[RMDB]
RNA sequence: GGGAACGACUCGAGUAGAGUCGAAAAGAAAGAAAGAAAGCUGACCCUUCUGCUGACGGAUCUUGUGGAGCACCACAGUGCAGAAGGGGAGAGAAGCUUUAAUGCCGACAGUCUGGGCAGCCUUGAAAAAACGGAUUCUUCUUCGGAAGAAUCCGAACUAUUGUUUAGAGUUCGCUCUAAACAAUAGAAAAGAAACAACAACAACAAC
Reactivity to DMS in 0.01 (KOAc 150mM, MgCl2 10mM, bicine 150mM(pH8.5), 24C), signal-to-noise 2, nucleotides 027 to 156: g000a120a110a130g030a100a090a090g010a060a060a030g010c000u000g010a160c000c000c000u000u000c000u000g040c010u010g010a230c060g020g010a090u000c040u020u000g040u000g010g010a190g030c240a060c030c000a050c020a100g020u010g020c010a010g010a020a030g020g010g030g000a040g010a160g000a120a040g010c020u000u000u000a040a060u000g020c010c000g000a100c060a120g000u010c070u010g030g000g040c030a110g020c070c030u000u000g000a000a020a100a070a160a160c020g020g010a040u000u000c000u000u000c000u000u000c300g030g020a020a020g010a010a020u000c000c000g010a010a030
Reactivity to 2A3 in 0.01 (KOAc 150mM, MgCl2 10mM, bicine 150mM(pH8.5), 24C), signal-to-noise 3, nucleotides 027 to 156: g040a010a050a000g070a030a100a010g050a040a040a000g000c010u040g060a070c000c000c000u000u000c000u000g010c010u040g090a100c110g080g050a080u110c040u120u090g000u030g030g060a120g130c130a080c090c010a010c000a030g040u040g060c000a000g000a000a000g000g000g010g000a000g000a000g000a000a010g000c000u030u040u000a080a040u120g010c020c010g030a070c040a040g060u050c040u110g010g010g010c010a010g010c030c010u060u070g070a120a020a000a020a010a010c010g000g000a000u000u000c000u000u000c000u020u070c210g030g020a000a000g000a000a010u000c000c000g000a000a000
Record summary:
The record gives the reactivity of an RNA of 207 nucleotides to DMS and 2A3. The DMS profile rests on 4,751 reads. For 2A3 the reverse transcriptase was SuperScript II with manganese. The reactions ran in a buffer of 150 mM KOAc, 10 mM MgCl2 and 150 mM bicine (pH 8.5), at 24 C.